[RMDB]
RNA sequence: GGGAACGACUCGAGUAGAGUCGAAAAGACAGAGUGGAAUCAGAGCAGGACUUGCCGCAUGUACAAUACCUAGUCGAUGAUGCACAACUCCAGGGACAACGUCAAAAGUACCGCCCUAUGUCUUGUCGAAGUAACACAGGUUCGCCUGUGUUACUUCAAAAGAAACAACAACAACAAC
Reactivity to 2A3 in 0.01 (KOAc 150mM, MgCl2 10mM, bicine 150mM(pH8.5), 24C), signal-to-noise 1, nucleotides 027 to 126: g010a020c010a020g130a000g000u050g020g050a070a050u130c060a070g000a030g070c020a030g000g090a070c030u030u040g000c040c010g050c060a050u150g040u110a030c050a020a100u040a120c010c030u030a060g050u070c010g060a030u050g010a020u010g050c030a010c000a090a110c010u030c040c030a030g050g000g000a020c010a040a020c080g060u070c020a000a000a000a230g010u030a070c000c000g050c000c010c000u070a070u100g070u020c010u050u050g020u060c050
Reactivity to DMS in 0.01 (KOAc 150mM, MgCl2 10mM, bicine 150mM(pH8.5), 24C), signal-to-noise 3, nucleotides 027 to 126: g010a080c040a080g000a030g010u000g020g000a110a080u010c080a030g000a220g000c070a080g000g000a100c130u000u000g030c070c020g030c110a070u000g020u010a030c110a030a090u000a080c040c030u000a080g030u000c040g030a080u010g020a080u000g000c070a050c060a070a080c060u010c030c160a050g010g000g000a060c070a040a060c090g010u000c130a020a060a050a070g020u000a060c100c060g000c020c010c030u000a090u020g010u000c010u010u000g010u010c190
The record gives the reactivity of an RNA of 177 nucleotides to 2A3 and DMS. Reactivities are given for positions 27 through 126. DMS adducts were read by reverse transcription with MarathonRT. The reactions ran in a buffer of 150 mM KOAc, 10 mM MgCl2 and 150 mM bicine (pH 8.5), at 24 C. 2A3 adducts were read by reverse transcription with SuperScript II with manganese.